[RMDB]
RNA sequence: GGGAACGACUCGAGUAGAGUCGAAAACAGAACUGGCUGGGCCGUGUGCUUAACCAGGACAAGAUCUCCUUCUCUCCAACGUUGUUGCCAACUCAUGAUUCUCCUAACCUGUGCUUGGAGAGACGUGCUACCAUAUAGGUGUUCGCACCUAUAUGAAACCUGGUAGUAAGUUCGCUUACUACCAGGUAAAAGAAACAACAACAACAAC
Reactivity to 2A3 in 0.01 (KOAc 150mM, MgCl2 10mM, bicine 150mM(pH8.5), 24C), signal-to-noise 2, nucleotides 027 to 156: c070a040g090a040a010c010u000g000g000c000u000g030g000g040c000c040g300u260g140u300g040c030u020u030a000a000c010c000a000g050g010a000c110a100a110g020a160u040c040u060c010c000u100u000c050u010c000u020c050c010a110a070c060g010u020u000g050u010u040g130c040c000a100a070c160u060c030a080u060g060a210u050u000c030u020c020c020u050a100a060c040c040u190g040u140g130c030u030u050g020g000a020g000a000g010a000c020g010u060g010c000u110a140c050c000a000u010a000u000a020g000g030u010g040u010u010c120g040c050a000c010c000u020a000u000a010u000g000a070a010
Reactivity to DMS in 0.01 (KOAc 150mM, MgCl2 10mM, bicine 150mM(pH8.5), 24C), signal-to-noise 1, nucleotides 027 to 156: c120a130g000a080a210c020u020g000g000c030u000g000g000g050c030c000g080u000g000u010g030c000u000u010a030a030c010c010a040g010g010a150c070a120a100g000a100u010c040u000c010c070u010u000c040u000c020u010c020c030a090a150c140g030u010u000g010u010u010g040c010c040a030a130c050u000c020a080u000g020a100u000u000c040u020c030c030u000a080a030c040c060u020g020u000g020c040u000u010g000g000a060g020a040g010a060c030g040u020g000c100u000a150c060c010a040u000a010u000a010g020g040u000g020u000u020c300g010c010a010c000c010u000a010u000a020u020g000a050a030
Description:
Chemical mapping of a 207-nucleotide RNA with 2A3 and DMS. Reactivities are given for positions 27 through 156. The reactions ran in a buffer of 150 mM KOAc, 10 mM MgCl2 and 150 mM bicine (pH 8.5), at 24 C. The 2A3 profile rests on 948 reads.